Structure probing data (2A3) for a 177-nucleotide construct. The RNA was probed in 150 mM KOAc, 10 mM MgCl2 and 150 mM bicine (pH 8.5) at 24 C. It was measured as part of the RMDB library OK1LIB.
[RMDB]
RNA sequence: GGGAACGACUCGAGUAGAGUCGAAAAAUUAUGAGACACCGGAUUUCUAUGAAACUAGGUCGUUGAUAGAUAAGCGUCGCCAUCUUCCACGAACUAUAGAAGUCAAUAGUUCAUUAGUCGCUGCGCACGCUCGACGAUCAUUCGUGAUCGUCGAGCGAAAAGAAACAACAACAACAAC
Reactivity to 2A3 in 0.01 (KOAc 150mM, MgCl2 10mM, bicine 150mM(pH8.5), 24C), signal-to-noise 1, nucleotides 027 to 126: a000u300u000a160u180g100a020g010a010c000a010c000c000g000g090a130u000u000u050c000u020a180u270g160a230a170a030c000u060a100g000g080u070c110g150u010u040g000a000u260a010g190a000u010a080a060g000c060g000u050c000g010c100c010a060u060c000u130u110c060c000a030c060g000a000a000c000u000a000u000a150g070a110a000g000u030c000a030a000u000a010g050u170u050c000a060u010u080a050g030u100c060g000c030u020g040c060g000c000a000